[RMDB]
RNA sequence: GGGAACGACUCGAGUAGAGUCGAAAACACAUCAGAGAGACGUGGCCUGAUAAUGCUGGCCAGCUUAAGGAAUUUUUAGAUGCUAAAGUUAAGCAAUCUGAUUAUGAUCGCUCAACCAGCAAUAUCGCAGCUGACGCCAUUUCGAUGGCGUCAGCUGAAAAGAAACAACAACAACAAC
Reactivity to 2A3 in 0.01 (KOAc 150mM, MgCl2 10mM, bicine 150mM(pH8.5), 24C), signal-to-noise 1, nucleotides 027 to 126: c030a000c000a080u060c150a060g150a090g010a010g000a060c110g020u070g020g130c030c000u070g000a010u030a000a070u010g050c000u020g000g000c000c020a000g000c000u030u030a020a010g220g000a040a000u080u000u000u000u060a070g000a000u020g000c000u000a130a280a170g160u300u160a050a080g000c000a030a300u000c000u000g060a050u000u000a000u000g180a020u040c120g000c000u020c000a000a190c010c000a000g000c000a000a000u140a050u140c030g080